[RMDB]
RNA sequence: GGGAACGACUCGAGUAGAGUCGAAAAGAGCUCUAGAUGCGAUUGUAGACUGUUACAGCAUCUGCUAACAGUCUGAGAUAGCUCAGGUUAGCUGGAGCUAUCUGCAACGGUGCAGACUCCAGUGACACCGUGAACAAUCGUUCAUGUCACAGAGCAGUCCUGAAAAUCGAUUCGUCGAUUUUCAGGAAAAAGAAACAACAACAACAAC
Reactivity to 2A3 in 0.01 (KOAc 150mM, MgCl2 10mM, bicine 150mM(pH8.5), 24C), signal-to-noise 2, nucleotides 027 to 156: g020a000g000c000u000c010u010a040g000a040u070g000c010g000a000u000u050g030u020a020g000a000c000u000g020u020u050a050c040a070g080c020a210u100c170u280g000c010u020a000a000c000a000g000u000c000u030g010a010g030a080u110a020g000c010u010c040a000g030g000u030u060a020g000c020u010g020g000a010g020c030u030a080u020c000u000g000c040a110a150c150g200g110u130g000c000a000g020a070c000u000c010c010a000g000u000g030a000c040a020c030c000g030u060g020a010a000c000a000a010u010c020g060u040u100c050a090u170g090u130c040a080c060a090g000a000g000c010a000g060
Reactivity to DMS in 0.01 (KOAc 150mM, MgCl2 10mM, bicine 150mM(pH8.5), 24C), signal-to-noise 2, nucleotides 027 to 156: g030a160g010c000u000c020u000a090g020a070u000g030c020g000a030u000u000g040u010a070g020a050c000u000g020u000u000a000c040a130g010c160a160u000c060u000g050c070u000a040a020c000a000g020u000c010u000g020a050g000a160u010a040g020c040u000c020a070g010g030u000u000a300g000c020u000g040g020a050g010c100u000a060u000c000u070g030c010a090a190c230g030g000u010g000c000a100g000a150c000u010c000c000a130g000u010g010a080c130a060c010c030g000u000g010a070a000c000a120a090u000c040g000u000u010c060a080u010g030u000c040a130c090a050g000a010g060c020a070g020
Chemical mapping of a 207-nucleotide RNA with 2A3 and DMS. DMS adducts were read by reverse transcription with MarathonRT. Reactivities are rounded to 0.1 and cut off at 0 and 3. The reactions ran in a buffer of 150 mM KOAc, 10 mM MgCl2 and 150 mM bicine (pH 8.5), at 24 C.